The record gives the reactivity of an RNA of 177 nucleotides to DMS and 2A3. The DMS profile rests on 7,621 reads. Conditions: 150 mM KOAc, 10 mM MgCl2 and 150 mM bicine (pH 8.5), 24 C. It was measured as part of the RMDB library OK2TST.
RNA sequence: GGGAACGACUCGAGUAGAGUCGAAAACAGGGCCAGAGCCUGCUGGUGGUCGGUGCCGCCGGCGGGGUCGGUUCGAUCCUGGUCCAACUGGCCCGGCAACUGACCGGCCUGAACGUGAUCGGCACCAUCCCACUCAUUUAUUCGUAAAUGAGUGGGAAAAAGAAACAACAACAACAAC
Reactivity to DMS in 0.01 (KOAc 150mM, MgCl2 10mM, bicine 150mM(pH8.5), 24C), signal-to-noise 6, nucleotides 027 to 126: c130a150g010g010g020c000c010a130g010a120g010c010c020u000g010c020u010g010g030u000g000g020u000c180g020g000u010g010c000c010g020c020c010g020g000c030g010g010g000g010u000c010g010g000u000u000c070g000a080u000c040c010u000g020g020u000c000c060a120a130c120u010g000g000c080c010c040g000g010c050a160a090c170u010g000a110c010c030g000g000c000c000u000g000a080a080c120g010u000g010a060u000c020g010g010c110a080c040c060a210
Reactivity to 2A3 in 0.01 (KOAc 150mM, MgCl2 10mM, bicine 150mM(pH8.5), 24C), signal-to-noise 4, nucleotides 027 to 126: c030a050g000g020g000c020c020a060g030a020g150c000c040u030g000c010u000g000g030u030g010g090u100c220g100g180u260g010c000c000g000c000c000g010g000c040g000g000g000g040u020c010g030g000u060u050c020g010a030u050c000c010u030g020g010u010c020c020a050a060c070u050g000g000c080c180c060g000g000c080a230a210c150u170g060a190c000c000g000g010c000c010u060g120a190a040c050g060u100g050a040u050c030g010g020c070a020c020c010a040